An RNA of 177 nucleotides, treated with 2A3 and DMS and read out base by base.
Reactivities are given for positions 27 through 126.
The DMS profile rests on 4,087 reads.
[RMDB]
RNA sequence: GGGAACGACUCGAGUAGAGUCGAAAAGAUAUGGACCCAGGGGGAGCUGGGAUUCGGAAACGAAUCAUAGCGAAGAACCUGGGUCCUAAGUCAAACCGACGAGAUAUCUUCGGAUAUCUCGUCGGAACUAAAGAAUCAUCUUCGGAUGAUUCUUUAGAAAAGAAACAACAACAACAAC
Reactivity to 2A3 in 0.01 (KOAc 150mM, MgCl2 10mM, bicine 150mM(pH8.5), 24C), signal-to-noise 2, nucleotides 027 to 126: g000a000u020a000u050g000g000a010c000c000c060a010g300g050g000g010g060a140g000c000u020g000g100g020a020u030u010c000g000g010a020a000a010c010g000a000a010u010c020a040u020a000g010c030g180a270a030g010a020a030c010c000u000g000g000g000u020c000c000u000a000a000g010u000c000a020a020a060c000c010g010a000c000g000a000g000a010u080a010u010c030u110u090c300g030g010a010u010a000u000c010u010c000g000u000c010g000g000a000a000
Reactivity to DMS in 0.01 (KOAc 150mM, MgCl2 10mM, bicine 150mM(pH8.5), 24C), signal-to-noise 3, nucleotides 027 to 126: g000a010u000a040u000g000g000a010c000c010c010a000g000g000g000g020g030a050g030c000u000g010g000g000a020u000u000c000g020g010a030a010a040c000g010a020a010u000c010a050u000a010g010c010g020a120a190g010a100a250c010c000u000g000g010g010u000c000c000u000a010a030g000u000c020a090a130a190c000c000g010a010c000g000a020g000a000u000a000u000c000u000u020c170g030g010a010u000a000u000c000u000c000g010u000c000g000g010a010a050
For 2A3, 5,041 sequencing reads were counted. It was measured as part of the RMDB library TTRDEL.